RNA sequence: GGGAACGACUCGAGUAGAGUCGAAAAAAUGCACCAAAACCUCUUGCCCAGAAGCGAGCUCGACAAGAACAAUUGUCCUUAAGGUGGAAGACAUUAAGACAGUUGCUAAUGAACUGCGAGCGCUGUCAAUGCAGUUUUCAGACACCAAUCGGCUCAAGGGUACGCUAAAAUUCGUUUUAGCGUACCCAAAAGAAACAACAACAACAAC
Reactivity to 2A3 in 0.01 (KOAc 150mM, MgCl2 10mM, bicine 150mM(pH8.5), 24C), signal-to-noise 1, nucleotides 027 to 156: a000a000u210g010c060a060c020c020a100a000a040a000c000c000u110c020u030u080g080c000c000c000a020g000a060a000g010c060g040a020g010c070u020c060g040a010c040a080a000g070a180a060c020a090a260u110u020g020u020c000c020u210u150a110a060g070g000u020g000g040a000a000g070a040c020a020u090u060a050a000g000a000c020a000g010u150u150g270c050u050a130a000u250g060a040a110c080u220g040c040g090a020g010c030g020c030u010g030u020c020a000a020u040g000c030a120g000u010u030u070u090c040a040g010a100c000a000c010c020a030a070u050c070g050g000c070u060c040a050a030

Structure probing data (2A3) for a 207-nucleotide construct. Source: RMDB library OK3TST, as collected in RNAgym. The 2A3 profile rests on 507 reads. 2A3 adducts were read by reverse transcription with SuperScript II with manganese. The RNA was probed in 150 mM KOAc, 10 mM MgCl2 and 150 mM bicine (pH 8.5) at 24 C.